[RMDB]
RNA sequence: GGGAACGACUCGAGUAGAGUCGAAAAUAGAUCAUCUGGCUGGUGAUGGCCAUCUGGCCGCGGGCGCGGCCCAUGAAGGAGAUCCCCCAGGCGAACAGGGCUGCGAUGCGGUUCCGAUAGCCGACCACUUAUGUACGGGCUUCGGCCCGUACAUAAGAAAAGAAACAACAACAACAAC
Reactivity to DMS in 0.01 (KOAc 150mM, MgCl2 10mM, bicine 150mM(pH8.5), 24C), signal-to-noise 1, nucleotides 027 to 126: u010a140g040a100u040c030a000u010c000u020g000g000c050u000g000g120u000g000a140u050g050g000c020c060a000u000c010u000g010g000c040c000g070c000g010g000g020c020g020c010g010g000c000c030c020a160u000g000a140a210g040g030a300g040a000u060c080c000c040c090c010a110g050g000c080g010a120a150c150a060g000g000g000c000u050g000c010g010a300u110g000c050g080g020u030u030c030c020g000a020u000a090g000c040c000g010a130c090c030a260
Reactivity to 2A3 in 0.01 (KOAc 150mM, MgCl2 10mM, bicine 150mM(pH8.5), 24C), signal-to-noise 3, nucleotides 027 to 126: u130a030g120a100u090c020a010u060c090u110g060g010c070u040g060g000u090g060a250u190g080g000c000c030a000u000c050u030g020g000c000c000g000c000g020g120g090c010g000c000g000g000c000c020c000a220u230g090a130a050g120g060a160g040a080u030c000c000c000c010c010a030g020g090c070g040a090a050c040a080g020g000g000c000u000g000c020g020a030u060g000c010g000g000u100u110c010c000g030a010u040a000g010c000c000g010a030c010c010a040

The record gives the reactivity of an RNA of 177 nucleotides to DMS and 2A3. For 2A3 the reverse transcriptase was SuperScript II with manganese.